The record gives the reactivity of an RNA of 177 nucleotides to 2A3 and DMS. 2A3 adducts were read by reverse transcription with SuperScript II with manganese. For DMS, 1,424 sequencing reads were counted. The data come from the RNA Mapping Database (RMDB), library OK2TST. Values cover nucleotides 27 to 126.

RNA sequence: GGGAACGACUCGAGUAGAGUCGAAAACUCGGUGAUCUCGGUUCUGACCGGCGUGUGGUCGGGACAGUCGUCGGGGACCAUGGCGGCUGCGGCCGCACCGUAUGUGGCGUGGAUGUCGGCCACGGCGGCGGCAGGUACUAUUCGUAGUACCUGCCGCAAAAGAAACAACAACAACAAC
Reactivity to 2A3 in 0.01 (KOAc 150mM, MgCl2 10mM, bicine 150mM(pH8.5), 24C), signal-to-noise 2, nucleotides 027 to 126: c020u010c010g000g060u030g030a070u040c070u060c200g120g000u060u000c000u000g000a000c000c000g250g000c260g190u240g090u130g000g000u000c000g000g030g000a010c000a030g000u010c000g000u010c010g000g000g000g000a000c000c000a090u120g130g020c050g000g000c020u030g020c090g090g000c000c000g000c010a030c000c020g100u100a150u300g000u050g100g000c140g050u080g010g150a180u260g090u250c020g130g000c000c000a000c000g000g010c010g010
Reactivity to DMS in 0.01 (KOAc 150mM, MgCl2 10mM, bicine 150mM(pH8.5), 24C), signal-to-noise 1, nucleotides 027 to 126: c000u000c000g010g020u010g000a030u010c170u000c280g040g030u000u000c010u010g000a060c020c010g030g000c200g000u000g010u020g010g020u010c010g010g000g030a020c000a090g000u000c040g030u000c000g000g010g000g010a190c010c020a120u010g010g010c000g040g010c000u030g000c160g020g000c010c000g010c020a020c030c040g010u000a110u000g050u000g000g020c040g000u000g000g000a180u000g020u010c040g020g010c000c000a020c010g000g010c010g000